RNA sequence: GGGAACGACUCGAGUAGAGUCGAAAACAUUACCCAUUGCUGGCGUCCUUGCAAGCAUCACAGCUGGCAGGGAAAUGGUCCACAUGAGGUAAAGAAUGAGACUCAAGUCAGCACACUUUAGCAGAUAUAAUAUGCAGGUGUUCGCACCUGCAUAUUAAAAAGAAACAACAACAACAAC
Reactivity to DMS in 0.01 (KOAc 150mM, MgCl2 10mM, bicine 150mM(pH8.5), 24C), signal-to-noise 2, nucleotides 027 to 126: c120a090u010u000a010c000c000c000a050u010u000g040c150u000g000g000c040g010u000c010c000u000u010g000c030a050a000g000c010a050u010c300a150c300a120g000c010u000g010g000c000a020g010g000g000a020a010a020u020g010g000u030c010c010a030c030a010u000g000a150g030g010u000a010a010a060g000a050a110u000g000a300g000a040c030u000c020a120a140g010u000c040a090g010c110a050c110a070c060u000u010u000a070g010c060a060g010a070u020a100
Reactivity to 2A3 in 0.01 (KOAc 150mM, MgCl2 10mM, bicine 150mM(pH8.5), 24C), signal-to-noise 1, nucleotides 027 to 126: c010a030u010u080a040c010c010c000a010u030u210g100c120u010g010g020c010g040u000c000c000u000u010g000c000a030a000g000c010a020u220c060a060c020a010g010c000u000g030g000c010a010g000g000g000a040a020a070u140g030g030u030c020c000a030c000a010u040g030a100g070g010u050a040a030a000g100a060a080u100g030a040g010a070c010u000c060a060a000g010u020c030a000g110c070a030c000a020c050u130u100u110a070g030c070a030g070a100u090a030